[RMDB]
This 177-nucleotide RNA was probed chemically with 2A3 and DMS. As a SHAPE reagent, 2A3 marks flexible, mostly unpaired nucleotides at the ribose 2'-OH. The 2A3 profile rests on 2,356 reads. It was measured as part of the RMDB library OK2TST. The reactions ran in a buffer of 150 mM KOAc, 10 mM MgCl2 and 150 mM bicine (pH 8.5), at 24 C.
RNA sequence: GGGAACGACUCGAGUAGAGUCGAAAAGGGGUUACCCAGCUCAGGUGGCCUGACGGUGGGACAAAUUCUCGCCCUCACCGAACAAUACGAUCUCAAAGGUUGGGGCGCGCAGGAUGUGAAAUCAUGAGUAGGGUAUUAUGUUCGCAUAAUACCCUACAAAAGAAACAACAACAACAAC
Reactivity to 2A3 in 0.01 (KOAc 150mM, MgCl2 10mM, bicine 150mM(pH8.5), 24C), signal-to-noise 2, nucleotides 027 to 126: g050g000g000g010u040u060a060c000c000c000a040g000c030u040c040a020g080g040u080g070g100c020c000u010g010a020c050g050g090u070g010g000g050a040c050a000a130a020u060u010c040u000c030g000c000c000c000u010c000a000c010c010g040a070a030c030a050a090u270a180c080g100a140u040c090u050c130a080a080a070g000g000u070u060g010g020g000g000c010g000c020g010c060a020g010g050a050u060g100u080g100a040a050a080u130c070a040u110g040a010
Reactivity to DMS in 0.01 (KOAc 150mM, MgCl2 10mM, bicine 150mM(pH8.5), 24C), signal-to-noise 6, nucleotides 027 to 126: g020g000g010g010u000u000a100c020c000c030a170g010c080u010c060a070g010g020u000g010g000c020c020u000g010a100c090g010g000u010g000g000g010a110c110a050a080a080u010u000c050u010c020g010c020c010c010u000c130a030c010c020g000a120a140c200a110a100u010a080c180g000a080u020c070u000c080a070a090a200g010g010u000u000g020g010g000g020c100g010c110g010c120a050g000g000a040u000g020u010g000a070a100a090u000c060a070u010g010a300
Reactivities are given for positions 27 through 126.